[RMDB]
RNA sequence: GGGAACGACUCGAGUAGAGUCGAAAAACCCGCUCUUGUGAGGCCUCUUCCCAGGUCCGGAGUCGACCUCCAUCUGAUCCGUCCGGGGCCUCUUCGCCGGGGGAGCCCCCUCCCCGUCCUUCCCUUUAUAGUUCAGUCUUCGGACUGAACAAAAGAAACAACAACAACAAC
Reactivity to 2A3 in 0.01 (KOAc 150mM, MgCl2 10mM, bicine 150mM(pH8.5), 24C), signal-to-noise 7, nucleotides 027 to 129: a000c000c000c010g010c020u050c000u030u130g050u040g030a030g010g010c000c000u000c010u040u020c000c000c020a030g040g030u050c040c050g030g030a030g040u050c030g050a090c000c000u010c030c000a080u020c060u090g060a090u050c050c060g110u030c020c030g040g000g000g000c020c010u020c000u030u020c020g010c020c000g000g000g000g000g000a010g020c000c000c010c000c000u020c010c000c000c000g040u020c000c000u010u040c010c000c000u060u160u070a230u090a060
Reactivity to DMS in 0.01 (KOAc 150mM, MgCl2 10mM, bicine 150mM(pH8.5), 24C), signal-to-noise 4, nucleotides 027 to 129: a090c040c010c000g030c100u040c020u010u020g030u030g040a090g000g000c030c010u010c120u000u000c000c040c040a140g030g040u040c090c010g000g050a040g050u030c060g030a130c030c020u050c040c030a050u000c040u050g000a060u030c000c060g060u070c090c090g020g000g020g030c070c050u030c020u040u050c080g030c070c020g000g040g000g020g030a090g000c000c000c000c000c000u010c000c000c000c000g050u020c010c030u000u060c010c000c010u000u010u000a110u060a100
This 170-nucleotide RNA was probed chemically with 2A3 and DMS. Reactivities are given for positions 27 through 129. 2A3 adducts were read by reverse transcription with SuperScript II with manganese.